[RMDB]
RNA sequence: GGGAACGACUCGAGUAGAGUCGAAAAUGAGUCGCAUCUAGCUGAAGAAGUACACUGAGUCGAGCACGUUGCGCAGGUCAAAGUCUCCCUUCUGGGGCAUCUGCUUCAGAAUGCGGUUCAGCUGGCGACUCACCGACUGAUUCGUCAGUCGGUGAGUAAAAGAAACAACAACAACAAC
Reactivity to DMS in 0.01 (KOAc 150mM, MgCl2 10mM, bicine 150mM(pH8.5), 24C), signal-to-noise 3, nucleotides 027 to 126: u030g010a030g000u000c000g030c020a100u000c140u030a020g020c000u010g010a030a040g010a120a070g000u030a050c110a150c180u030g040a110g000u010c050g020a150g000c080a100c190g030u010u020g000c060g000c040a190g000g000u000c050a050a140a170g000u000c040u000c010c000c000u000u000c020u020g000g010g000g010c010a130u060c150u040g030c010u020u000c000a020g000a030a010u010g010c110g000g000u000u000c010a000g000c000u000g010g000c010g000
Reactivity to 2A3 in 0.01 (KOAc 150mM, MgCl2 10mM, bicine 150mM(pH8.5), 24C), signal-to-noise 3, nucleotides 027 to 126: u140g000a000g000u000c000g010c050a060u000c080u200a010g020c020u010g010a030a000g030a050a000g050u130a020c070a040c070u100g040a030g100u120c030g000a040g020c100a020c250g110u120u230g020c040g000c050a020g010g010u070c070a050a010a040g020u000c010u030c010c000c000u000u000c000u020g000g000g030g000c020a080u040c100u300g000c000u000u000c000a000g000a000a010u040g050c180g000g000u000u010c000a010g000c020u020g010g000c020g000